[RMDB]
RNA sequence: GGGAACGACUCGAGUAGAGUCGAAAACACACACUAGGGUUCUUCAGAUAGAACCCAGCUCAACUAUCUGAAGUACUAGUUGACAUAGUACUCGUCGAAACGAAAAUAUGUAAGUGUGUGGAUACAAGAUAGUAUUCACUUUCGAGUGAAUGCUAUCAAAAGAAACAACAACAACAAC
Reactivity to 2A3 in 0.01 (KOAc 150mM, MgCl2 10mM, bicine 150mM(pH8.5), 24C), signal-to-noise 9, nucleotides 027 to 126: c010a000c000a000c000a000c020u070a060g140g040g030u040u010c000u010u010c010a010g020a030u030a010g060a100a040c000c010c000a000g000c020u090c040a050a150c000u000a000u010c000u010g010a010a000g020u030a010c010u030a030g100u030u150g030a010c000a010u030a000g060u100a100c040u010c020g050u030c120g190a170a130a090c010g020a010a020a020a050u050a010u020g030u050a030a050g000u000g000u000g000u010g010g010a040u090a130c060a060a040
Reactivity to DMS in 0.01 (KOAc 150mM, MgCl2 10mM, bicine 150mM(pH8.5), 24C), signal-to-noise 9, nucleotides 027 to 126: c000a000c000a010c000a020c000u000a140g010g010g010u010u000c000u000u000c010a010g000a010u000a000g000a110a100c060c040c060a020g010c060u010c100a120a210c010u000a010u000c000u000g000a010a010g010u010a020c010u000a100g010u020u010g000a090c020a010u000a010g010u020a150c120u000c010g010u010c300g020a070a110a120c010g000a010a030a130a130u010a010u000g000u000a080a030g030u000g010u000g000u000g000g000a100u030a060c170a090a120

Record summary: The record gives the reactivity of an RNA of 177 nucleotides to 2A3 and DMS. Source: RMDB library OK1LIB, as collected in RNAgym. Conditions: 150 mM KOAc, 10 mM MgCl2 and 150 mM bicine (pH 8.5), 24 C. The DMS profile rests on 72,205 reads. For DMS the reverse transcriptase was MarathonRT.